[RMDB]
RNA sequence: GGGAACGACUCGAGUAGAGUCGAAAAGACAGACCCAUUAGGAUUGGUUUCAAAACCUGAAUUGUUGUGGAAGAUAUUCAGUACCUAUCAAUCUGGUAGUGGUGCAAACACUAGUUGUAAGGCCCACACCUGUAUACAUGUUCGCAUGUAUACAGGUAAAAGAAACAACAACAACAAC
Reactivity to 2A3 in 0.01 (KOAc 150mM, MgCl2 10mM, bicine 150mM(pH8.5), 24C), signal-to-noise 3, nucleotides 027 to 126: g070a020c040a030g090a050c000c030c000a040u030u190a050g010g020a000u000u050g040g060u020u080u290c120a060a040a050a080c000c000u000g020a020a050u050u090g090u040u130g100u130g150g100a080a020g000a100u090a030u110u010c000a000g010u070a070c010c000u040a020u010c010a030a030u010c010u030g090g050u060a060g010u020g020g040u180g060c000a020a100a000c030a020c040u060a070g050u100u020g040u040a060a090g080g030c020c010c010a020c010
Reactivity to DMS in 0.01 (KOAc 150mM, MgCl2 10mM, bicine 150mM(pH8.5), 24C), signal-to-noise 7, nucleotides 027 to 126: g010a150c160a100g010a180c030c010c020a160u000u010a150g020g010a040u010u000g000g000u000u000u000c170a080a050a100a090c200c010u000g000a010a020u010u010g030u010u000g010u000g020g000a160a110g000a040u000a010u000u000c020a010g000u000a080c070c040u000a050u000c040a020a030u000c020u000g010g020u000a090g020u000g000g010u010g000c040a050a150a040c040a020c050u010a080g010u020u000g010u010a050a170g010g000c010c010c010a040c090